RNA sequence: GGGAACGACUCGAGUAGAGUCGAAAAGAUAUGGAGCGUGUUGGUGACAUGCCUACUCUCGGAAACGAGAGUUAGGCAACAGCACCAUAGCACGCUCCUAAGUCAAAACACGCGGUUCGCCGCGUGAUCGAGAAGCUUACUUCGGUAAGCUUCUCGAAAAAGAAACAACAACAACAAC
Reactivity to DMS in 0.01 (KOAc 150mM, MgCl2 10mM, bicine 150mM(pH8.5), 24C), signal-to-noise 1, nucleotides 027 to 126: g000a090u000a300u050g000g020a000g030c010g010u000g050u000u010g000g030u000g000a120c110a250u000g010c000c010u000a000c000u000c000u000c020g020g000a190a170a090c000g020a000g030a040g000u050u000a010g060g010c000a040a000c300a090g010c000a000c000c000a120u000a150g010c010a000c020g000c000u000c000c000u000a010a100g020u000c060a060a080a270a300c010a000c000g030c000g000g010u000u010c260g010c020c000g000c030g020u000g000a060